Chemical mapping of a 177-nucleotide RNA with DMS. Conditions: 150 mM KOAc, 10 mM MgCl2 and 150 mM bicine (pH 8.5), 24 C. The data come from the RNA Mapping Database (RMDB), library OK2TST. DMS adducts were read by reverse transcription with MarathonRT.
[RMDB]
RNA sequence: GGGAACGACUCGAGUAGAGUCGAAAAAGAUGGGGAUGUGGUGGAGUUUGAGGUGCUCAUUUCACAGAUGUUCGAAUUCAUACUCACGCUCGUGGGCAACAGCAAGUUCCUGCCGCUGCUGGAACCCCUCUGUACCUCAGUUCGCUGAGGUACAGAGAAAAGAAACAACAACAACAAC
Reactivity to DMS in 0.01 (KOAc 150mM, MgCl2 10mM, bicine 150mM(pH8.5), 24C), signal-to-noise 2, nucleotides 027 to 126: a050g010a110u000g010g000g000g020a070u010g050u010g000g040u030g010g020a100g020u000u000u010g000a060g020g010u000g020c030u010c040a040u000u000u020c150a070c170a080g000a060u010g000u000u010c080g000a080a110u000u000c100a070u010a120c090u000c040a060c080g000c060u010c140g040u000g020g030g000c050a020a090c030a050g040c000a030a060g000u000u010c020c020u010g050c060c040g040c040u000g000c060u000g010g000a100a110c010c000c050